[RMDB]
RNA sequence: GGGAACGACUCGAGUAGAGUCGAAAAUAACACUGGCGGCUGCGUAUCACUCUAGGGUACGUGAUAGUGCGAUAUAAGAAGCACUGGUACAUGCCGGCAGGGACAGUUACGAGAUGGCCGCAGUCUCAAAAGGGGUCAUUCUUCGGAAUGACCCCAACCAUAUUGCGUGGUUCGCCACGCAAUAUGGAAAAGAAACAACAACAACAAC
Reactivity to 2A3 in 0.01 (KOAc 150mM, MgCl2 10mM, bicine 150mM(pH8.5), 24C), signal-to-noise 3, nucleotides 027 to 156: u100a010a010c030a000c050u050g190g000c000g010g000c030u050g010c000g010u010a020u030c020a100c210u110c080u130a090g080g060g010u020a010c030g010u020g030a040u050a040g000u000g000c010g010a000u040a020u070a290a120g140a060a010g010c000a000c010u000g020g040u100a060c020a040u200g000c000c000g050g010c000a020g010g000g020a030c050a060g010u030u070a050c030g010a000g000a130u100g080g000c010c030g000c050a010g020u020c010u010c040a070a120a010a040g000g000g000g000u010c000a000u000u020c010u010u040c200g090g030a010a010u000g000a000c000c000c000c000a000a000
Reactivity to DMS in 0.01 (KOAc 150mM, MgCl2 10mM, bicine 150mM(pH8.5), 24C), signal-to-noise 2, nucleotides 027 to 156: u010a080a060c040a060c020u000g040g000c000g020g050c000u020g010c030g010u000a020u000c030a150c110u010c140u000a120g020g040g030u000a040c060g060u000g040a090u000a000g030u000g000c010g000a150u000a150u000a120a160g000a210a300g020c010a030c010u000g030g020u020a090c080a110u000g030c030c010g030g000c020a070g000g010g000a040c060a100g030u000u000a060c090g000a120g030a130u000g000g000c010c010g010c030a170g000u000c030u020c040a030a060a160a160g010g040g040g000u000c000a010u010u010c000u000u000c260g020g000a030a030u000g000a000c000c000c000c000a000a000